Chemical mapping of a 177-nucleotide RNA with DMS and 2A3. For 2A3 the reverse transcriptase was SuperScript II with manganese. Source: RMDB library RFM100, as collected in RNAgym. Values cover nucleotides 27 to 126. The RNA was probed in 150 mM KOAc, 10 mM MgCl2 and 150 mM bicine (pH 8.5) at 24 C. For DMS, 2,497 sequencing reads were counted.
[RMDB]
RNA sequence: GGGAACGACUCGAGUAGAGUCGAAAAGUGCAAGGAGGCACCAAUGCUCUGAGGCUGUCGCGUGGUGCAGCGUCGAGCAUCCUCGCCGAGGUCCUUUCUGCUGCCUGUCCCGCCUCACCCCGCUCCAUAAUGCUAGUGCUUUCGAGCACUAGCAUUAAAAAGAAACAACAACAACAAC
Reactivity to DMS in 0.01 (KOAc 150mM, MgCl2 10mM, bicine 150mM(pH8.5), 24C), signal-to-noise 2, nucleotides 027 to 126: g000u000g020c020a120a000g010g040a220g000g020c120a020c090c080a140a110u000g010c020u010c050u020g020a050g040g040c000u000g000u010c080g020c190g020u030g010g000u020g020c000a000g010c030g000u000c010g020a030g010c000a050u010c050c020u000c090g000c030c050g010a140g000g000u000c070c010u000u040u060c040u000g000c060u010g000c020c020u000g000u000c040c020c030g000c000c060u000c030a090c080c000c010c010g000c050u000c030c050a160
Reactivity to 2A3 in 0.01 (KOAc 150mM, MgCl2 10mM, bicine 150mM(pH8.5), 24C), signal-to-noise 3, nucleotides 027 to 126: g090u070g010c060a090a090g060g000a020g140g000c020a000c020c040a050a050u060g000c000u020c090u150g010a030g000g030c010u010g000u040c050g010c060g110u110g000g050u180g020c010a010g000c010g290u010c000g000a000g000c000a040u060c000c000u010c020g100c010c010g030a020g000g070u120c000c010u030u090u070c030u030g080c010u020g030c010c000u000g080u070c020c000c000g030c010c000u020c020a020c000c000c000c020g030c010u020c000c000a090